RNA sequence: GGGAACGACUCGAGUAGAGUCGAAAACAAACACGCCGGUGAGGGAUCCGUAGCGCAUCGACUUCCACAGCUCCAACAGCGUCUCUGGCCAUGCCACGCCACCUACCGGGAAAAAAUCAGGGACAGCCGGUAAUGGCCCAUUCGUGGGCCAUUACCGAAAAGAAACAACAACAACAAC
Reactivity to 2A3 in 0.01 (KOAc 150mM, MgCl2 10mM, bicine 150mM(pH8.5), 24C), signal-to-noise 1, nucleotides 027 to 126: c030a000a020a040c050a000c060g030c000c000g000g090u130g050a050g040g120g010a070u100c060c000g100u130a070g000c000g000c040a020u100c020g070a110c010u040u040c000c030a020c020a060g030c040u020c190c050a070a100c000a040g020c030g130u030c010u000c000u050g030g000c030c020a000u030g000c000c020a100c060g000c000c000a020c030c010u060a150c030c030g020g070g030a000a040a000a000a000a090u070c000a120g000g000g000a000c020a020g050c000
Chemical mapping of a 177-nucleotide RNA with 2A3.